This 177-nucleotide RNA was probed chemically with DMS and 2A3.

[RMDB]
RNA sequence: GGGAACGACUCGAGUAGAGUCGAAAACCGCUACUCUUCGGAGUAGCGGAUACAUCUCGGGUCCGGGGCUUACCGUAGGACCAACGGUAAGGCCAGAGAUGAAGGGAGAGAUUUUCGAAUCUCUCAAGCUGAAGAACGAGUUCGCUCGUUCUUCAGCAAAAGAAACAACAACAACAAC
Reactivity to DMS in 0.01 (KOAc 150mM, MgCl2 10mM, bicine 150mM(pH8.5), 24C), signal-to-noise 1, nucleotides 027 to 126: c000c000g010c000u000a000c000u000c000u000u000c160g030g000a000g010u000a000g000c000g000g000a010u000a050c040a030u000c020u000c000g000g000g020u010c070c070g040g020g000g000c020u000u000a000c010c000g000u000a060g040g040a130c170c150a010a010c010g000g010u000a010a020g000g010c010c000a120g000a020g000a000u010g030a190a130g010g000g000a000g010a030g010a010u000u000u000u000c180g000a020a040u000c000u000c000u000c010a060a040
Reactivity to 2A3 in 0.01 (KOAc 150mM, MgCl2 10mM, bicine 150mM(pH8.5), 24C), signal-to-noise 1, nucleotides 027 to 126: c030c000g050c010u000a000c000u010c010u010u090c230g110g000a010g000u000a000g000c000g000g000a010u000a010c010a010u000c010u000c020g100g010g050u080c020c020g070g000g000g000c010u010u010a000c010c000g020u020a040g000g300a070c040c000a000a000c020g000g010u000a000a010g080g120c010c020a030g000a010g000a010u030g080a090a100g100g090g000a010g010a000g000a000u050u000u050u090c130g100a050a000u000c010u010c000u000c030a010a030